[RMDB]
RNA sequence: GGGAACGACUCGAGUAGAGUCGAAAAUCAAAUAAUUCCACCGACUGCCCAUUGUGGGUUACCAGUUGCUCUGAUGAUGGCCCAAGUGGGAGUAAAGAGAAGAAGCGAGAUAGGAUCAACAAAAAAACAUAUUAUAGGUGUUCGCACCUAUAAUAUGAAAAGAAACAACAACAACAAC
Reactivity to DMS in 0.01 (KOAc 150mM, MgCl2 10mM, bicine 150mM(pH8.5), 24C), signal-to-noise 4, nucleotides 027 to 126: u010c110a080a110a090u000a110a150u000u000c010c010a120c100c050g010a050c040u000g000c010c010c000a050u000u000g030u010g000g010g010u000u000a030c030c010a030g000u010u010g000c190u010c040u000g010a100u010g010a120u010g000g010c000c010c010a040a020g020u000g000g000g000a060g010u010a040a040a130g000a110g010a040a050g010a090a070g010c060g010a080g010a080u010a060g000g010a300u010c080a030a050c080a010a000a080a070a060a060a130
Reactivity to 2A3 in 0.01 (KOAc 150mM, MgCl2 10mM, bicine 150mM(pH8.5), 24C), signal-to-noise 3, nucleotides 027 to 126: u020c020a060a040a040u150a070a080u170u000c010c020a050c050c040g080a030c010u180g160c020c010c000a020u030u150g180u100g180g000g020u000u010a030c010c010a030g030u150u090g170c090u080c010u240g080a090u050g020a040u050g040g010c000c000c000a000a010g030u020g020g000g000a010g000u020a020a110a010g100a000g000a070a000g030a050a000g020c040g030a040g020a100u050a100g120g030a060u100c030a030a090c030a040a120a010a010a040a000a010